[RMDB]
RNA sequence: GGGAACGACUCGAGUAGAGUCGAAAAUUUCAAGUCCAGGUUAUUACUAUUACUGCUACCUCUUGAAGGAUUUUCAUAAUUGAGAACUCUGCCAACAAUUAUUUUACGCGGAACAUCCGGAGGUCUACAUAUACGACUCGUUCGCGAGUCGUAUAUGAAAAGAAACAACAACAACAAC
Reactivity to DMS in 0.01 (KOAc 150mM, MgCl2 10mM, bicine 150mM(pH8.5), 24C), signal-to-noise 4, nucleotides 027 to 126: u020u020u040c070a030a080g000u030c050c060a120g000g000u010u020a040u010u020a100c080u010a080u040u020a060c110u000g000c070u010a030c030c000u010c020u000u020g010a110a100g000g000a040u010u000u000u000c030a050u010a040a050u010u000g000a070g000a080a090c040u010c030u000g030c070c040a070a110c080a050a040u020u020a040u000u020u010u010a120c190g000c110g000g000a030a070c090a040u000c020c010g000g010a040g010g000u000c080u010a110
Reactivity to 2A3 in 0.01 (KOAc 150mM, MgCl2 10mM, bicine 150mM(pH8.5), 24C), signal-to-noise 6, nucleotides 027 to 126: u040u060u050c030a020a020g030u000c030c040a010g070g040u100u080a100u180u040a100c100u070a090u210u060a060c050u060g070c030u050a040c000c000u020c000u050u070g100a060a010g040g010a020u010u010u020u050c020a020u030a140a080u060u070g040a060g050a160a040c030u050c070u140g030c030c010a020a040c020a040a030u060u020a120u040u160u080u090a080c090g030c070g060g010a030a020c030a060u020c010c010g020g000a000g000g040u000c010u040a060